Structure probing data (DMS and 2A3) for a 177-nucleotide construct. 2A3 adducts were read by reverse transcription with SuperScript II with manganese. For DMS the reverse transcriptase was MarathonRT. The 2A3 profile rests on 1,571 reads.
RNA sequence: GGGAACGACUCGAGUAGAGUCGAAAAGAUCCUAGAUACAUGGAUCGAUCGCUAGGUACGUACCAUGAGCAUCGAGACUAGUGAUCUGAUCAGAUCACGUACAGGAUCCAUGCGCUAGCGUACUCAGGCCCCCAUAAAACUUCGGUUUUAUGGGGGCAAAAGAAACAACAACAACAAC
Reactivity to DMS in 0.01 (KOAc 150mM, MgCl2 10mM, bicine 150mM(pH8.5), 24C), signal-to-noise 2, nucleotides 027 to 126: g010a060u000c010c000u010a150g000a140u010a080c190a100u010g000g000a060u000c020g010a130u000c060g000c040u000a030g010g000u010a020c050g000u000a060c120c110a120u020g000a120g030c010a020u000c300g010a080g010a130c020u010a140g020u000g000a000u000c000u040g000a110u000c220a040g020a030u000c000a000c010g010u010a050c300a080g000g000a130u010c000c050a020u000g000c050g010c080u010a130g000c010g000u000a020c000u000c060a140g010
Reactivity to 2A3 in 0.01 (KOAc 150mM, MgCl2 10mM, bicine 150mM(pH8.5), 24C), signal-to-noise 2, nucleotides 027 to 126: g020a020u010c000c000u000a030g070a190u270a120c090a050u120g010g010a000u000c020g040a090u080c030g060c060u030a040g000g010u050a020c030g030u010a090c040c060a100u090g030a000g040c020a000u020c020g010a000g010a050c000u020a070g000u030g000a020u000c000u050g100a220u200c090a000g000a000u000c000a010c030g040u040a050c030a060g080g000a000u000c020c020a000u000g000c010g000c060u030a000g050c020g000u000a010c020u030c070a010g090
Reactivities are given for positions 27 through 126. The DMS profile rests on 1,212 reads.